[RMDB]
RNA sequence: GGGAACGACUCGAGUAGAGUCGAAAACAGCCGGGAGCUUUGGCAAGACUCACGUCUCUAACAACCGAGCUCCCCAAGUGAGCAACUCCUGUCCCUUUUACGGGCUCAGGACUCUAAGGGGGUCCGUGUGAGAGGACCGUGAUGGAUUGACCAAGCAGAGUACUAGUCCAUUCGUGGACUAGUACUCAAAAGAAACAACAACAACAAC
Reactivity to 2A3 in 0.01 (KOAc 150mM, MgCl2 10mM, bicine 150mM(pH8.5), 24C), signal-to-noise 2, nucleotides 027 to 156: c030a000g160c030c020g050g080g000a090g000c010u090u140u170g090g000c000a000a000g020a010c000u030c000a020c020g100u000c010u000c010u080a170a090c050a070a170c100c040g040a060g030c010u120c020c000c000c000a070a040g160u080g100a000g030c110a120a180c140u030c030c000u000g010u000c010c000c000u100u180u060u290a090c090g010g000g020c030u020c010a000g030g000a020c000u000c000u060a100a070g000g000g000g000g010u020c010c030g010u030g000u000g110a020g000a000g010g030a020c000c090g000u000g000a050u100g000g030a000u000u000g090a170c000c000a000a000g000c010a030